[RMDB]
Structure probing data (DMS and 2A3) for a 170-nucleotide construct. The 2A3 profile rests on 17,369 reads. Conditions: 150 mM KOAc, 10 mM MgCl2 and 150 mM bicine (pH 8.5), 24 C. The data come from the RNA Mapping Database (RMDB), library 15KLIB.
RNA sequence: GGGAACGACUCGAGUAGAGUCGAAAAACUUUAAGGUCUCAACACAAGAGUUCAGAUUCAUGACUGCUAACAAUCUAACUGCACCUAGAAAUUCUUGGGAGGCUAUGGCUCUGAACUUUAAGUUAAUCAGGAAAAGAGUUCGCUCUUUUCAAAAGAAACAACAACAACAAC
Reactivity to DMS in 0.01 (KOAc 150mM, MgCl2 10mM, bicine 150mM(pH8.5), 24C), signal-to-noise 5, nucleotides 027 to 129: a070c080u060u040u050a060a040g050g010u070c040u020c060a080a050c190a000c160a140a130g040a000g030u000u060c050a030g010a030u060u030c050a070u030g020a000c020u010g090c050u000a050a050c160a040a070u000c040u040a070a080c050u000g000c090a020c120c070u030a040g040a070a120a100u040u020c170u020u020g010g050g020a070g020g070c190u050a020u000g040g020c050u000c000u000g000a070a060c100u000u000u000a080a080g000u000u000a050a090u040c000a120g070
Reactivity to 2A3 in 0.01 (KOAc 150mM, MgCl2 10mM, bicine 150mM(pH8.5), 24C), signal-to-noise 7, nucleotides 027 to 129: a000c100u200u180u130a110a020g090g020u010c010u010c030a040a060c070a030c040a090a040g010a000g020u010u020c000a000g000a010u010u020c010a010u020g100a070c040u060g030c010u100a040a030c030a040a100u060c020u050a040a080c080u110g030c060a070c040c010u020a010g030a040a130a060u110u040c030u040u040g000g000g010a020g020g000c060u030a010u020g000g000c000u000c000u000g000a000a000c000u030u040u010a030a010g000u000u040a070a070u120c060a030g090